Structure probing data (2A3) for a 207-nucleotide construct. For 2A3 the reverse transcriptase was SuperScript II with manganese. For 2A3, 630 sequencing reads were counted. High 2A3 reactivity points to a flexible backbone, as in loops and unpaired stretches. The RNA was probed in 150 mM KOAc, 10 mM MgCl2 and 150 mM bicine (pH 8.5) at 24 C.
RNA sequence: GGGAACGACUCGAGUAGAGUCGAAAAACUGACGGUACCCCGUCAGAACGGUAGAAAAGAUGGUUUGAAAACCACGCCUUCUACCAAUAUAGUAAAUAAAUAGGCGGAGCGGUCAUACGUGACCGCAAAAACAUAUUCAGCUUCGGCUGAAUAUGAAGUCAAGACGGAAGUUCGCUUCCGUCUUGACAAAAGAAACAACAACAACAAC
Reactivity to 2A3 in 0.01 (KOAc 150mM, MgCl2 10mM, bicine 150mM(pH8.5), 24C), signal-to-noise 1, nucleotides 027 to 156: a000c000u010g030a000c000g000g110u100a060c070c070c000c000g020u000c000a000g000a020a030c090g000g000u000a000g020a000a000a000a000g080a290u010g000g120u030u100u270g140a170a160a000a020c000c010a000c000g000c010c010u000u000c000u000a000c000c010a000a000u090a000u030a000g060u010a040a040a080u110a070a040a040u110a000g010g010c030g000g010a050g020c000g000g040u000c000a000u040a210c230g090u030g000a000c020c000g010c000a000a000a000a000a000c000a000u020a000u000u000c000a000g020c030u070u120c160g160g000c010u000g000a000a000u020a020u000g000a000a000